[RMDB]
RNA sequence: GGGAACGACUCGAGUAGAGUCGAAAAUCCCGCCGAAACAGGGUUUUCACCCUUCCUUUCUUCGGGUGUCCUUCCUCGCGCCCGCAGGACCACCCCUCGCCCCCUUUGCGCUGUCGCUUCGGCUACUACCCGGUGGAAACAACUGAAGCUCCCGAGACCAUGUACGUAAGUUCGCUUACGUACAUGGAAAAGAAACAACAACAACAAC
Reactivity to 2A3 in 0.01 (KOAc 150mM, MgCl2 10mM, bicine 150mM(pH8.5), 24C), signal-to-noise 1, nucleotides 027 to 156: u040c000c000c000g090c040c040g030a040a050a080c220a130g040g010g070u060u040u050u140c160a080c000c000c030u050u040c060c000u090u100u060c030u080u060c020g000g040g000u030g020u070c030c040u110u060c010c020u030c010g040c020g040c000c000c000g000c040a040g060g000a020c000c030a010c010c000c000c000u050c010g010c000c000c000c010c030u010u050u100g010c070g000c020u020g050u100c000g000c000u010u020c010g020g000c000u040a130c000u000a020c090c000c010g030g000u010g040g000a070a130a020c040a000a070c030u080g060a010a000g000c030u010c010c010c020g000a030g000a020
Reactivity to DMS in 0.01 (KOAc 150mM, MgCl2 10mM, bicine 150mM(pH8.5), 24C), signal-to-noise 1, nucleotides 027 to 156: u000c000c030c000g020c140c040g000a060a060a030c040a060g010g020g040u000u000u000u000c100a170c050c000c010u000u080c040c040u010u000u010c030u000u010c050g020g040g030u000g030u000c000c030u000u000c000c010u010c040g000c030g030c010c010c010g050c090a100g030g030a110c070c010a080c010c000c000c010u000c030g000c010c020c030c040c040u000u020u010g020c040g030c050u000g030u010c070g000c040u010u000c030g040g030c020u000a070c070u010a090c000c010c000g000g000u000g000g030a220a160a160c050a100a160c040u000g000a100a110g000c060u000c000c000c000g040a220g000a270

Conditions: 150 mM KOAc, 10 mM MgCl2 and 150 mM bicine (pH 8.5), 24 C. Chemical mapping of a 207-nucleotide RNA with 2A3 and DMS. Values cover nucleotides 27 to 156. The data come from the RNA Mapping Database (RMDB), library VIROID. For DMS, 2,822 sequencing reads were counted.